[RMDB]
RNA sequence: GGGAACGACUCGAGUAGAGUCGAAAAAUCCGAAUGGGGUAACCUGAUCGAGGCAAUACUCGAUCGUUCAUACCUGAAUACAUAGGGUAUGAAACGCGAAACCCGCUGAAGUGAAACAUCUCAGUAACAAAAAGGGUUAGUUCGCUAACCCUUUUUGAAAAGAAACAACAACAACAAC
Reactivity to 2A3 in 0.01 (KOAc 150mM, MgCl2 10mM, bicine 150mM(pH8.5), 24C), signal-to-noise 4, nucleotides 027 to 126: a000u000c000c010g030a050a050u120g020g010g050g030u060a030a090c010c040u030g000a000u010c000g010a000g030g060c180a140a100u120a210c000u000c000g000a000u000c000g000u000u000c000a000u000a000c010c010u040g020a010a010u070a050c040a010u040a000g020g010g010u000a000u000g000a040a010a000c060g040c040g010a080a040a070c010c000c000g000c000u030g030a080a000g010u020g050a030a030a020c040a140u180c000u000c010a010g010u020a070a080
Reactivity to DMS in 0.01 (KOAc 150mM, MgCl2 10mM, bicine 150mM(pH8.5), 24C), signal-to-noise 6, nucleotides 027 to 126: a080u020c010c010g040a090a060u030g000g010g010g000u010a040a240c090c040u010g010a000u000c000g000a010g000g000c150a160a100u040a170c000u000c000g000a000u000c000g010u000u000c010a000u000a010c000c000u010g000a150a200u020a160c130a010u000a300g000g000g000u000a000u000g000a000a040a080c120g000c110g010a060a190a070c010c010c010g010c010u010g000a080a030g010u000g000a160a130a150c140a070u020c020u000c010a010g010u020a120a150
Description:
Structure probing data (2A3 and DMS) for a 177-nucleotide construct. DMS adducts were read by reverse transcription with MarathonRT. 2A3 adducts were read by reverse transcription with SuperScript II with manganese. The RNA was probed in 150 mM KOAc, 10 mM MgCl2 and 150 mM bicine (pH 8.5) at 24 C.